[RMDB]
RNA sequence: GGGAACGACUCGAGUAGAGUCGAAAAAUUAAAAAAUUAAGCAAAAGACAAUCACCUUUCCCGCUGACAAUAGCGUUAUCCCUCUGCACUUCGGUAAUAUGAGGGCACAGUAAAUCCCGCAAGGAUGAUGAUCAACAGGGGUUCGCCCCUGUUGAAACUAUAACCAUAAGUUCGCUUAUGGUUAUAGAAAAGAAACAACAACAACAAC
Reactivity to DMS in 0.01 (KOAc 150mM, MgCl2 10mM, bicine 150mM(pH8.5), 24C), signal-to-noise 2, nucleotides 027 to 156: a070u040u000a030a040a100a060a060a100u000u000a050a110g030c070a080a070a040a070g000a130c090a090a110u000c060a160c040c020u000u000u010c040c020c000g020c020u010g020a130c130a070a100u010a090g000c020g010u000u000a040u000c000c020c010u010c000u000g010c060a060c060u010u030c150g070g020u000a070a110u010a090u000g000a070g010g020g010c040a040c040a130g000u000a070a090a070u000c000c010c010g010c120a060a070g000g020a050u000g000a100u010g020a130u000c000a010a040c000a030g000g000g010g000u000u000c280g010c000c010c000c020u000g030u000u010g000a000a020a100
Reactivity to 2A3 in 0.01 (KOAc 150mM, MgCl2 10mM, bicine 150mM(pH8.5), 24C), signal-to-noise 2, nucleotides 027 to 156: a000u080u090a030a050a010a000a000a080u190u230a100a000g040c030a050a110a030a000g020a060c040a050a110u090c030a080c030c010u060u060u030c010c060c020g010c040u000g000a060c110a180a210u040a080g040c000g040u080u090a060u120c000c000c000u040c020u020g000c040a010c020u080u100c150g150g000u030a070a010u120a060u300g020a000g000g030g050c000a000c010a000g050u020a040a070a090u020c010c010c010g080c100a020a020g040g020a000u030g010a030u040g020a000u040c000a000a000c000a020g000g020g000g010u030u040c080g120c030c000c010c010u000g020u000u000g000a010a000a000